[RMDB]
RNA sequence: GGGAACGACUCGAGUAGAGUCGAAAAGCUAGUCGGAGACGACUAGCAACGAUCAGUUCGCUGAUCGGAACGUGCAUUCGAAUACGCUAGAAGCACGAAUAGGCGACGCAUAGCGUAAACCAGAGGAAGCUCAUGACAUGAAUAACAAGGCGUCGCGAUUAGUAUCACCAUUCGUGGUGAUACUAAUAAAAGAAACAACAACAACAAC
Reactivity to DMS in 0.01 (KOAc 150mM, MgCl2 10mM, bicine 150mM(pH8.5), 24C), signal-to-noise 4, nucleotides 027 to 156: g020c000u000a000g030u010c010g020g010a300g010a300c010g020a050c010u000a000g010c010a020a040c000g010a010u000c010a020g010u000u000c300g040c020u010g010a020u010c010g030g000a050a070c020g020u000g010c020a230u010u010c080g020a120a170u000a070c020g010c020u010a160g000a060a090g030c010a060c040g010a150a150u010a120g020g020c020g020a030c030g030c010a170u000a050g000c020g040u000a060a070a120c080c040a130g010a130g000g000a090a100g020c040u000c000a090u000g020a030c050a090u000g000a120a080u030a070a070c060a090a120g020g010c000g020u000c000g020c020g000
Reactivity to 2A3 in 0.01 (KOAc 150mM, MgCl2 10mM, bicine 150mM(pH8.5), 24C), signal-to-noise 8, nucleotides 027 to 156: g010c000u000a000g020u000c010g030g010a020g000a100c010g000a000c000u000a000g000c000a000a010c010g000a000u000c000a010g050u090u120c170g010c100u000g000a000u000c000g010g040a060a010c020g010u020g000c080a300u010u010c000g010a080a050u040a050c010g010c020u010a020g000a020a000g010c010a000c010g000a020a100u220a130g080g000c000g000a000c000g000c020a050u080a060g000c020g020u030a090a050a060c070c050a040g020a030g110g050a100a050g060c020u040c050a110u100g050a100c020a110u180g110a140a040u180a150a050c070a060a090g070g000c000g000u010c000g000c000g000